[RMDB]
RNA sequence: GGGAACGACUCGAGUAGAGUCGAAAAAUUACUCGUUUUGGAUCGCGCUAUCUGCUCCAGUCAUCAGCGCAGAAAAUCCAACGUGAUCUUCGUAACGAUACAUAUGAUCACCUCCAACAUCUCUCAAUGGAUUUCUUUGCAUCACAUCAAACUGGAGAUACAUAUUGCGCUUCGGCGCAAUAUGUAUAAAAGAAACAACAACAACAAC
Reactivity to 2A3 in 0.01 (KOAc 150mM, MgCl2 10mM, bicine 150mM(pH8.5), 24C), signal-to-noise 3, nucleotides 027 to 156: a000u190u100a100c040u040c050g020u030u020u080u090g020g010a030u020c030g010c000g010c060u020a050u040c030u090g050c010u010c010c010a030g040u040c040a110u080c040a030g000c010g000c030a000g030a020a080a010a020u000c010c000a030a090c070g020u020g000a010u020c020u110u100c090g070u080a140a100c130g050a140u130a190c070a030u130a070u170g020a000u020c010a010c050c050u090c060c010a130a090c050a180u070c110u040c030u030c190a010a300u100g030g020a000u000u010u030c050u000u100u090g020c020a080u120c050a080c020a110u120c080a040a040a030c010u000g000g010a040g000
Reactivity to DMS in 0.01 (KOAc 150mM, MgCl2 10mM, bicine 150mM(pH8.5), 24C), signal-to-noise 1, nucleotides 027 to 156: a160u000u010a020c030u000c020g000u000u000u000u000g000g000a090u010c080g040c140g050c010u000a250u000c040u010g020c020u000c000c000a060g010u010c060a080u010c090a120g040c140g030c020a100g030a000a020a030a120u000c000c020a110a110c180g050u020g000a020u000c020u000u010c230g040u000a080a070c190g040a190u000a050c010a130u000a030u000g010a070u000c010a050c010c060u010c020c100a160a130c050a120u010c110u000c090u000c000a180a160u000g000g020a080u010u000u000c050u000u000u020g000c060a090u000c010a020c080a050u000c060a100a090a050c070u000g020g030a030g010
The data come from the RNA Mapping Database (RMDB), library OK3TST.
This 207-nucleotide RNA was probed chemically with 2A3 and DMS.
High 2A3 reactivity points to a flexible backbone, as in loops and unpaired stretches.
Conditions: 150 mM KOAc, 10 mM MgCl2 and 150 mM bicine (pH 8.5), 24 C.